[RMDB]
RNA sequence: GGGAACGACUCGAGUAGAGUCGAAAACACACCUUAUGGGUGUGUAGUGUUUGUGCUAAGGGAAAUCAUAACCUUAGGUAUGUUGUAUAAACAUAACGGCAAACUAGUUAUAGCUAAGGUGUUUCACAAGUCAUACUGACUUCGGUCAGUAUGACUUAAAAGAAACAACAACAACAAC
Reactivity to DMS in 0.01 (KOAc 150mM, MgCl2 10mM, bicine 150mM(pH8.5), 24C), signal-to-noise 2, nucleotides 027 to 126: c000a000c000a010c000c010u000u010a190u000g030g050g000u000g020u000g000u000a050g000u000g000u000u000u010g000u000g000c040u000a040a020g000g020g000a060a130a090u030c300a090u010a040a170c010c000u000u000a000g000g030u000a000u000g010u000u000g000u060a140u030a080a020a010c010a010u020a020a150c220g010g000c040a040a020a060c100u010a120g000u000u020a110u000a080g040c090u010a100a080g000g000u020g000u000u000u010c000a100c180
Reactivity to 2A3 in 0.01 (KOAc 150mM, MgCl2 10mM, bicine 150mM(pH8.5), 24C), signal-to-noise 1, nucleotides 027 to 126: c000a010c000a000c000c000u170u100a170u300g200g000g000u010g000u000g000u000a060g070u040g010u140u000u000g000u000g000c010u000a030a000g000g010g020a000a000a270u000c000a010u010a050a300c000c000u000u000a000g000g000u090a000u030g000u000u000g040u000a090u190a300a000a000c000a000u030a130a050c070g000g000c000a010a000a000c080u060a000g150u270u150a050u110a080g050c080u050a080a200g000g000u020g000u000u000u000c080a160c040